[RMDB]
RNA sequence: GGGAACGACUCGAGUAGAGUCGAAAAAGCAGGCGGCACACAGAUCCGCACUGCAGCGCUGCAUGCGCUAGGGAUUGUGGCCGGGGCGCACCGCGCAGAUCAUGCCAUGUCAGCGCCGGCAGAGGACCCCUAUGCGUAGGUUCGCCUACGCAUAGGGAAAAGAAACAACAACAACAAC
Reactivity to 2A3 in 0.01 (KOAc 150mM, MgCl2 10mM, bicine 150mM(pH8.5), 24C), signal-to-noise 2, nucleotides 027 to 126: a000g040c000a020g010g050c050g040g000c090a020c020a000c050a200g070a230u070c010c030g010c020a040c000u010g000c020a010g030c020g000c020u050g010c040a030u060g010c030g000c190u090a070g090g120g080a050u040u180g290u190g300g000c030c050g020g000g030g210c060g040c040a090c050c010g030c020g000c050a000g000a090u050c030a050u090g000c000c000a020u050g090u180c020a040g010c010g000c000c000g040g020c040a030g020a040g130g110a050c010
Reactivity to DMS in 0.01 (KOAc 150mM, MgCl2 10mM, bicine 150mM(pH8.5), 24C), signal-to-noise 3, nucleotides 027 to 126: a080g000c020a010g000g030c010g010g000c200a110c120a100c300a140g010a100u000c000c000g000c040a140c030u000g020c020a110g010c030g020c020u010g000c060a070u010g030c070g020c000u000a140g010g000g010a080u000u020g020u000g010g000c060c040g040g010g010g000c090g030c070a100c050c100g010c120g020c030a120g000a070u000c070a100u000g000c000c010a090u000g000u010c060a040g000c000g010c020c080g000g000c060a060g010a110g000g000a140c120
Annotation:
This 177-nucleotide RNA was probed chemically with 2A3 and DMS. For 2A3, 1,220 sequencing reads were counted. The data come from the RNA Mapping Database (RMDB), library OK2TRN. For DMS, 1,793 sequencing reads were counted. The RNA was probed in 150 mM KOAc, 10 mM MgCl2 and 150 mM bicine (pH 8.5) at 24 C.